[RMDB]
RNA sequence: GGGAACGACUCGAGUAGAGUCGAAAAAUGCCCCGAAUGUGCUGGGCGACACGCGGGCUACAAUGGCCGAGACAGUGGGAUGCAACGCCGAAAGGCGACGCUAAUCUCCGAAACUCGGUCGUAGUUCCCAACUCUCAUACUUCGGUAUGAGAGUUGGAAAAGAAACAACAACAACAAC
Reactivity to DMS in 0.01 (KOAc 150mM, MgCl2 10mM, bicine 150mM(pH8.5), 24C), signal-to-noise 2, nucleotides 027 to 126: a090u080g000c080c000c000c080g010a140a070u040g020u000g020c060u010g000g020g000c070g040a080c090a020c120g010c160g020g000g020c000u000a010c050a120a070u030g010g000c000c000g010a020g010a020c090a080g010u090g000g000g000a010u010g000c030a040a300c000g000c020c000g010a080a160a070g000g010c000g020a010c300g020c010u010a070a040u000c000u000c000c000g000a080a080a080c010u000c000g010g020u000c010g000u000a000g020u000u010c000
Reactivity to 2A3 in 0.01 (KOAc 150mM, MgCl2 10mM, bicine 150mM(pH8.5), 24C), signal-to-noise 7, nucleotides 027 to 126: a000u150g050c020c000c000c000g110a200a150u240g020u090g060c070u130g010g060g040c030g030a020c010a000c050g070c060g000g000g000c000u010a010c040a050a180u250g000g010c000c000g020a000g010a020c050a040g040u300g070g000g000a000u030g000c000a030a030c000g000c000c000g030a060a030a000g000g000c010g000a000c040g000c020u090a060a020u000c010u010c000c000g050a070a090a050c000u000c000g000g000u000c000g000u010a000g000u030u050c010
The record gives the reactivity of an RNA of 177 nucleotides to DMS and 2A3.
For 2A3 the reverse transcriptase was SuperScript II with manganese.
The data come from the RNA Mapping Database (RMDB), libraries RFM100 and RFMREP.